[RMDB]
RNA sequence: GGGAACGACUCGAGUAGAGUCGAAAAGAGCACGUUUGCAGUUUCUUUCUAGCUUUGCAGCCUUCUUCGGUGGUUUGGCUGCUUUCUUUCUUUCCACCGUUGCUAGUUUCUGCUUUCGUGCUCGAGAGGGUCGUUUCGCGUUCGCGCGAGGCGACCCAAAAGAAACAACAACAACAAC
Reactivity to 2A3 in 0.01 (KOAc 150mM, MgCl2 10mM, bicine 150mM(pH8.5), 24C), signal-to-noise 6, nucleotides 027 to 126: g010a000g000c000a000c010g010u000u000u000g010c010a010g000u000u110u070c070u030u130u030c030u040a010g000c020u040u120u190g030c050a020g000c010c020u080u110c020u090u080c070g090g050u080g030g030u070u080u080g040g000c010u010g000c000u020u040u030c010u010u060u010c000u010u030u000c010c020a050c000c020g070u060u080g010c020u000a020g010u010u030u010c010u010g000c000u010u010u000c000g000u000g000c000u000c000g000a000g010a000
Reactivity to DMS in 0.01 (KOAc 150mM, MgCl2 10mM, bicine 150mM(pH8.5), 24C), signal-to-noise 1, nucleotides 027 to 126: g010a000g000c000a010c000g020u000u000u000g000c030a030g000u030u000u010c060u080u040u030c090u000a040g000c030u010u010u040g050c010a050g000c040c050u000u000c050u000u010c120g050g000u010g000g000u020u010u000g040g000c050u010g000c020u000u000u000c000u000u000u000c020u000u010u000c000c060a290c000c070g000u020u030g030c030u010a060g000u020u010u000c000u000g000c000u000u000u000c000g020u010g010c000u010c000g000a050g000a260